[RMDB]
RNA sequence: GGGAACGACUCGAGUAGAGUCGAAAAAUUACGCGGCCGUAAUUAUACGAUGCCGGCAUAUUACGUAGCAUAUAUUACGUACGCGAUAUAUGCUAAUAUUACGCGAUUAGCUACGCGGCGCUACGUACAGUGUCUAGAAUUUCGAUUCUAGACACUGAAAAGAAACAACAACAACAAC
Reactivity to 2A3 in 0.01 (KOAc 150mM, MgCl2 10mM, bicine 150mM(pH8.5), 24C), signal-to-noise 9, nucleotides 027 to 126: a000u150u120a060c080g000c010g070g010c020c010g010u020a070a110u300u230a180u050a200c030g050a060u200g000c010c000g040g000c020a070u190a070u110u070a030c030g000u010a000g020c060a020u100a010u030a050u210u150a070c100g050u030a110c030g010c000g060a020u030a010u010a010u200g000c000u000a010a010u080a040u120u140a090c140g020c030g080a030u040u040a010g000c020u020a020c010g000c000g010g000c030g000c000u000a000c000g000u010a040
Reactivity to DMS in 0.01 (KOAc 150mM, MgCl2 10mM, bicine 150mM(pH8.5), 24C), signal-to-noise 8, nucleotides 027 to 126: a090u000u000a050c140g020c020g010g000c020c010g020u010a030a130u000u010a130u000a030c020g010a130u000g020c020c020g010g020c080a040u000a050u000u000a020c040g010u000a010g010c020a110u000a050u000a060u010u000a080c100g010u010a040c060g030c050g010a120u010a100u010a050u010g010c020u010a020a020u000a060u010u010a100c210g010c150g000a060u000u000a040g000c070u000a090c030g010c020g010g000c070g010c020u000a010c010g010u000a060